[RMDB]
RNA sequence: GGGAACGACUCGAGUAGAGUCGAAAACUAAACUGAAAACCUGCUUAUCAGAAGCUGAAAAACAAGGUCUUAUACAACGUAAUUAUUGUACUAUGGUAAAUAUACCAGUUGAGAAAAAGGAGAAUAACGUACCAUACCGGUUCGCCGGUAUGGUACGAAAAGAAACAACAACAACAAC
Reactivity to DMS in 0.01 (KOAc 150mM, MgCl2 10mM, bicine 150mM(pH8.5), 24C), signal-to-noise 2, nucleotides 027 to 126: c020u000a130a160a230c100u000g020a090a130a060a150c040c070u000g000c040u000u000a070u000c160a100g020a080a100g000c010u030g000a050a060a050a270a040c070a200a030g000g030u000c050u000u000a240u050a020c010a000a080c220g050u000a050a070u000u090a190u040u050g010u050a030c160u050a040u030g030g020u000a090a130a060u000a070u000a010c030c010a050g000u000u000g000a000g000a010a020a120a160a030g000g000a070g000a040a060u000a220a240
Reactivity to 2A3 in 0.01 (KOAc 150mM, MgCl2 10mM, bicine 150mM(pH8.5), 24C), signal-to-noise 2, nucleotides 027 to 126: c000u010a050a060a040c060u030g220a000a110a000a000c000c000u020g020c000u030u020a100u140c070a050g060a150a000g070c060u070g060a030a010a010a020a010c080a080a000g010g050u020c000u020u090a080u030a140c100a050a000c030g140u140a040a270u180u080a130u050u250g140u000a030c040u060a130u050g050g040u000a160a000a000u290a020u060a030c000c030a040g030u070u080g050a070g180a070a180a080a000a000g100g040a070g020a090a090u100a140a000

The data come from the RNA Mapping Database (RMDB), library OK1LIB. This 177-nucleotide RNA was probed chemically with DMS and 2A3.